This 177-nucleotide RNA was probed chemically with 2A3 and DMS. DMS adducts were read by reverse transcription with MarathonRT. For DMS, 2,574 sequencing reads were counted. The reactions ran in a buffer of 150 mM KOAc, 10 mM MgCl2 and 150 mM bicine (pH 8.5), at 24 C. The data come from the RNA Mapping Database (RMDB), library M2PK50.
[RMDB]
RNA sequence: GGGAACGACUCGAGUAGAGUCGAAAAGCAUUCGCCUUCGGGCGAAUGCAAACAAAACCGGGCAAAAAUUAAAGGUACUAGUUCGGAAUAAGUACCUAAACAAAAGAGCUUGGUUCGCCAAGCUCAAGAAUGGAUAAUAGUUCGCUAUUAUCCAUUCAAAAGAAACAACAACAACAAC
Reactivity to 2A3 in 0.01 (KOAc 150mM, MgCl2 10mM, bicine 150mM(pH8.5), 24C), signal-to-noise 5, nucleotides 027 to 126: g020c010a000u000u010c000g020c020c020u040u060c190g070g000g010c000g000a010a000u000g000c010a010a000a010c030a000a080a000a030c000c020g040g050g000c050a090a120a130a110a210u140u190a300a300a050g000g010u010a000c000u020a030g180u120u210c140g110g080a120a100u150a130a030g000u010a000c000c000u070a020a070a030c060a020a140a020a040g000a000g000c000u000u000g010g000u010u000c010g000c000c000a000a000g020c000u000c000a000a000
Reactivity to DMS in 0.01 (KOAc 150mM, MgCl2 10mM, bicine 150mM(pH8.5), 24C), signal-to-noise 3, nucleotides 027 to 126: g010c000a000u000u000c010g020c000c010u000u000c180g040g040g020c000g030a000a010u000g000c000a010a040a090c040a100a080a120a140c000c000g000g010g050c100a060a050a120a130a060u010u010a090a090a050g000g010u000a010c010u000a060g010u000u010c150g030g000a130a140u010a040a030g010u020a010c000c000u000a030a070a100c120a040a050a130a140g000a010g020c010u000u010g010g010u000u010c160g010c020c020a010a000g000c010u000c010a020a040